[RMDB]
RNA sequence: GGGAACGACUCGAGUAGAGUCGAAAAUCGUGAGAUGUGGUGCCUCACGCGCUCGAGGCGUCCGUGGUCAGAGAGACCACUGACGCAAAAACUCGAGCGCAAAUAAAUCGCAUUACAUAGAGAAUAAAAAUGAUGGGCUAUUCGUAGCCCAUCAUUUAAAAGAAACAACAACAACAAC
Reactivity to 2A3 in 0.01 (KOAc 150mM, MgCl2 10mM, bicine 150mM(pH8.5), 24C), signal-to-noise 1, nucleotides 027 to 126: u110c030g010u030g030a030g010a070u220g040u010g000g000u000g000c000c000u030c000a010c030g000c040g020c000u000c000g000a000g000g000c000g000u000c010c000g000u020g000g000u020c040a000g090a040g020a000g020a300c000c030a000c000u020g020a000c000g000c050a100a140a080a000a000c000u000c000g000a000g030c000g000c000a000a000a000u040a000a020a000u110c060g010c010a020u010u000a010c020a070u130a010g200a000g120a130a270u250a080a130
Reactivity to DMS in 0.01 (KOAc 150mM, MgCl2 10mM, bicine 150mM(pH8.5), 24C), signal-to-noise 1, nucleotides 027 to 126: u030c070g020u000g000a140g010a040u010g010u010g000g000u000g000c060c020u000c020a000c140g000c020g040c000u010c000g020a010g020g030c010g010u000c000c160g020u000g000g020u000c000a190g030a200g000a230g010a060c000c000a010c000u000g000a000c000g000c020a070a070a060a130a250c000u000c020g000a000g000c000g000c010a000a060a110u010a080a040a070u000c080g010c010a000u000u000a050c000a020u000a100g010a050g000a140a060u030a000a130